[RMDB]
RNA sequence: GGGAACGACUCGAGUAGAGUCGAAAAAUUGUGAUUGACCUGGGAUGGAUCGGAAUGGAUAGAUGUGGUCAAUACUAUCUGCAAACGUUAAUCAAGGUAAAGAGGAUCCUGUAGACGUCUCCGCGAACAGUCCUCACUCAUUCGUGAGUGAGGACUGAAAAGAAACAACAACAACAAC
Reactivity to DMS in 0.01 (KOAc 150mM, MgCl2 10mM, bicine 150mM(pH8.5), 24C), signal-to-noise 2, nucleotides 027 to 126: a110u030u060g000u010g010a100u000u000g060a020c050c000u030g000g060g000a100u040g010g000a060u040c080g020g000a090a100u000g000g000a010u000a000g000a120u000g020u020g010g000u020c070a030a050u000a100c030u060a060u010c000u010g000c120a020a100a090c030g000u000u010a090a100u010c100a050a010g000g000u050a000a090a080g010a230g030g000a080u000c030c000u030g010u000a070g010a090c060g020u000c030u030c050c050g040c090g020a050a090
Reactivity to 2A3 in 0.01 (KOAc 150mM, MgCl2 10mM, bicine 150mM(pH8.5), 24C), signal-to-noise 1, nucleotides 027 to 126: a000u230u180g070u080g030a030u050u050g020a030c000c000u050g000g000g150a110u050g000g110a040u060c050g040g150a090a070u090g070g030a040u040a010g060a050u020g040u030g060g020u030c000a020a020u100a130c030u040a100u010c000u080g070c000a000a080a190c080g040u090u090a040a000u080c130a140a050g020g000u130a070a100a000g060a000g060g000a040u080c000c000u000g110u070a020g000a050c010g030u010c030u010c040c000g000c030g010a060a000